[RMDB]
Structure probing data (DMS and 2A3) for a 177-nucleotide construct.
RNA sequence: GGGAACGACUCGAGUAGAGUCGAAAAGAUAUGGAUGAUGGACAUGAAGCGUGGUCGGAAACGACCAUACUUCAACAGCCAUAUCCUAAGUCAAAUCAAUAAUUGUGGUUCGCCACAAUUAUUGAAACACGAGAUUACGGUUCGCCGUAAUCUCGUGAAAAGAAACAACAACAACAAC
Reactivity to DMS in 0.01 (KOAc 150mM, MgCl2 10mM, bicine 150mM(pH8.5), 24C), signal-to-noise 2, nucleotides 027 to 126: g000a020u000a300u020g000g000a020u010g000a040u000g000g020a040c110a210u010g000a000a010g010c030g060u000g000g000u000c010g000g000a120a050a170c000g000a010c010c010a000u000a000c000u000u010c000a020a050c170a090g000c000c000a010u010a080u000c000c030u000a090a110g000u010c040a090a090a170u000c000a000a010u000a010a000u000u010g000u000g000g020u000u010c200g000c000c000a000c010a020a000u000u020a000u000u000g000a010a110a180
Reactivity to 2A3 in 0.01 (KOAc 150mM, MgCl2 10mM, bicine 150mM(pH8.5), 24C), signal-to-noise 1, nucleotides 027 to 126: g020a000u070a000u120g000g040a020u170g060a010u050g130g000a050c080a160u130g000a020a000g000c030g030u000g000g000u010c020g010g020a060a050a000c010g010a000c030c020a010u000a010c000u000u000c010a030a020c070a010g100c000c000a010u000a000u010c030c010u040a240a020g050u080c050a040a040a160u010c000a010a000u000a020a000u000u000g000u000g110g120u060u130c300g050c050c000a000c040a000a000u000u000a000u000u000g000a030a000a000
Notes
For 2A3 the reverse transcriptase was SuperScript II with manganese. It was measured as part of the RMDB library TTRDEL. Conditions: 150 mM KOAc, 10 mM MgCl2 and 150 mM bicine (pH 8.5), 24 C.